[RMDB]
RNA sequence: GGGAACGACUCGAGUAGAGUCGAAAAGCCGGCUUUCAGGAGCUCCAUACACACGCUGCCUUCGGUACCCACCACACAACAUCCAAGUGGCCUCCGUCACUACCUGGCUGCGGGGCGGGCACACCUCGAGCUUGCAAUAAUUCGUUAUUGCAAGCUCAAAAGAAACAACAACAACAAC
Reactivity to DMS in 0.01 (KOAc 150mM, MgCl2 10mM, bicine 150mM(pH8.5), 24C), signal-to-noise 2, nucleotides 027 to 126: g000c040c040g010g020c060u000u000u000c140a110g000g000a120g000c030u010c040c060a040u000a080c080a080c090a040c140g020c020u000g030c010c050u000u000c070g000g010u000a100c030c030c010a120c040c040a060c120a040c050a050a030c090a090u010c070c040a060a170g020u000g000g010c050c020u010c090c050g010u000c030a060c050u030a040c040c050u000g020g000c030u000g000c150g000g020g000g010c050g000g000g020c050a090c030a060c050c060u010c110
Reactivity to 2A3 in 0.01 (KOAc 150mM, MgCl2 10mM, bicine 150mM(pH8.5), 24C), signal-to-noise 1, nucleotides 027 to 126: g010c000c000g020g020c090u110u170u170c060a070g000g080a040g040c020u000c040c000a060u100a120c020a010c020a010c050g040c030u070g060c020c000u100u080c030g030g000u060a060c010c010c020a030c030c010a040c010a000c000a010a170c000a010u030c020c010a090a010g060u030g010g030c030c030u060c040c010g030u010c010a020c070u080a050c010c010u030g090g000c020u050g080c030g000g000g000g000c060g020g050g000c040a030c010a010c040c020u040c010
Conditions: 150 mM KOAc, 10 mM MgCl2 and 150 mM bicine (pH 8.5), 24 C.
Structure probing data (DMS and 2A3) for a 177-nucleotide construct.